[RMDB]
RNA sequence: GGGAACGACUCGAGUAGAGUCGAAAACUUGGAGUCUGUUAGCUUACACUGAUAAUUGCAAAAUUGAAUGAUCCGCUAUAGUUUUCAUCUCCAAGGAAUGCUAUGGCAAAUGUGUAAUUGUAAGCAACAUAAUGGAUCCAUUCGUGGAUCCAUUAUGAAAAGAAACAACAACAACAAC
Reactivity to DMS in 0.01 (KOAc 150mM, MgCl2 10mM, bicine 150mM(pH8.5), 24C), signal-to-noise 6, nucleotides 027 to 126: c080u010u000g000g000a180g020u020c090u000g000u010u010a090g020c000u000u000a010c010a080c230u030g020a130u050a040a020u000u000g010c130a030a060a070a100u030u030g000a110a120u030g000a090u030c130c170g010c000u000a000u010a000g010u000u010u000u000c010a020u040c070u020c130c180a090a080g000g000a010a010u000g000c000u010a000u000g000g020c010a060a040a040u010g010u020g010u020a030a040u010u010g000u000a000a010g030c030a070a190
Reactivity to 2A3 in 0.01 (KOAc 150mM, MgCl2 10mM, bicine 150mM(pH8.5), 24C), signal-to-noise 9, nucleotides 027 to 126: c020u010u040g060g010a030g050u050c070u100g090u190u120a030g000c000u020u020a000c040a030c050u130g120a130u150a220a050u090u090g030c040a060a090a130a290u140u130g110a100a180u210g040a100u070c080c030g000c000u000a000u000a010g000u000u020u030u050c040a090u060c040u070c150c080a040a020g040g010a010a000u030g000c000u000a020u010g020g000c020a040a070a090u190g050u020g030u060a030a070u050u040g000u010a010a010g000c000a010a020
Source: RMDB library OK1LIB, as collected in RNAgym. Structure probing data (DMS and 2A3) for a 177-nucleotide construct. In probing experiments dimethyl sulfate is read out at A N1 and C N3, which are open when not base-paired. The RNA was probed in 150 mM KOAc, 10 mM MgCl2 and 150 mM bicine (pH 8.5) at 24 C. The DMS profile rests on 13,587 reads.